[RMDB]
RNA sequence: GGGAACGACUCGAGUAGAGUCGAAAAAAAAAAGGGUUUGAAAGGAGAGCUCUGCUUCCUCAUACAUACUCAUCUUUUCUAUGGAUAAGUAUGAGGAAAUGGAGCUCUCCUUCCAUUCCAAAAAAAACAUAUAAGGUUUGUUCGCAAACCUUAUAUGAAAAGAAACAACAACAACAAC
Reactivity to DMS in 0.01 (KOAc 150mM, MgCl2 10mM, bicine 150mM(pH8.5), 24C), signal-to-noise 1, nucleotides 027 to 126: a020a030a090a100a100a230g000g000g000u000u000u000g010a020a000a000g000g000a010g010a040g020c000u000c000u000g020c070u000u000c000c000u000c000a010u000a020c000a100u000a020c040u000c030a020u000c220u000u010u020u010c240u010a040u000g010g010a020u010a010a040g020u010a010u010g010a000g000g000a010a000a010u000g000g000a010g000c010u000c000u000c000c000u000u000c000c000a000u000u000c000c010a000a000a000a030a050a040a040a150
Description
This 177-nucleotide RNA was probed chemically with DMS. The RNA was probed in 150 mM KOAc, 10 mM MgCl2 and 150 mM bicine (pH 8.5) at 24 C. It was measured as part of the RMDB library RFMREP.